[RMDB]
RNA sequence: GGGAACGACUCGAGUAGAGUCGAAAAAAACUUUUGUGACUUGCUGAAACGGGACUAAUCUCCUCACCGAGGCUAAGCAAGUAAAAUACGCCUCUCAUAUCCUUACCUGAGGGUGGUAAGGAAAUCACCUGCAACGCUUCCUUCGGGAAGCGUUGAACUGGUUCUUCUAGUUCGCUAGAAGAACCAGAAAAGAAACAACAACAACAAC
Reactivity to 2A3 in 0.01 (KOAc 150mM, MgCl2 10mM, bicine 150mM(pH8.5), 24C), signal-to-noise 2, nucleotides 027 to 156: a000a000a000c150u170u120u070u170g110u070g030a030c000u030u000g020c000u020g020a090a140a060c030g000g000g010a010c030u050a050a080u080c000u010c060c010u060c020a040c010c060g000a000g040g000c050u060a010a000g010c010a000a050g060u120a010a010a000a040u150a040c060g030c010c000u000c000u000c000a070u040a060u170c010c000u020u010a010c000c010u040g060a080g010g080g030u030g000g000u010a000a000g000g000a000a090a000u080c010a010c020c040u080g020c010a000a000c000g010c030u000u030c000c000u020u050c120g040g000g000a000a000g000c000g000u010u000g000a000a060